Source: RMDB library RFM100, as collected in RNAgym. Chemical mapping of a 177-nucleotide RNA with 2A3 and DMS. For DMS, 1,356 sequencing reads were counted. DMS adducts were read by reverse transcription with MarathonRT.
RNA sequence: GGGAACGACUCGAGUAGAGUCGAAAAUUUGCAGCUUUAGAUUGUGGUCAGAGGCUGUUACAAGAUCUUAUAUAUUCUAUGAUGGGCCAUAUGCAUCUAAAGCAUGGUGGUUCAGUUUAUGAAUAUAUCAGUCCAUAUGCUUCGGCAUAUGGACUGAAAAAGAAACAACAACAACAAC
Reactivity to 2A3 in 0.01 (KOAc 150mM, MgCl2 10mM, bicine 150mM(pH8.5), 24C), signal-to-noise 2, nucleotides 027 to 126: u050u080u270g040c000a000g080c030u060u050u160a090g030a090u030u250g110u080g300g000u070c100a060g000a010g210g000c000u060g000u070u030a060c080a050a120g020a120u000c030u110u000a010u000a000u000a000u100u000c030u000a010u060g040a040u010g000g000g020c000c000a020u010a000u090g000c000a040u000c070u300a090a060a000g000c000a000u010g030g080u020g000g000u030u020c060a050g060u080u020u000a190u290g010a000a000u000a000u000a010
Reactivity to DMS in 0.01 (KOAc 150mM, MgCl2 10mM, bicine 150mM(pH8.5), 24C), signal-to-noise 1, nucleotides 027 to 126: u030u000u000g050c000a060g000c000u000u010u010a110g020a050u010u010g020u050g030g020u000c060a300g010a100g010g000c000u040g000u000u060a080c230a060a080g010a170u000c020u000u000a040u000a010u000a010u000u000c010u030a100u000g010a050u000g000g000g010c000c030a000u000a030u000g000c030a040u120c230u040a000a150a100g000c000a000u030g050g010u010g000g010u000u000c000a050g000u000u040u020a000u000g000a010a010u010a000u000a030
The RNA was probed in 150 mM KOAc, 10 mM MgCl2 and 150 mM bicine (pH 8.5) at 24 C.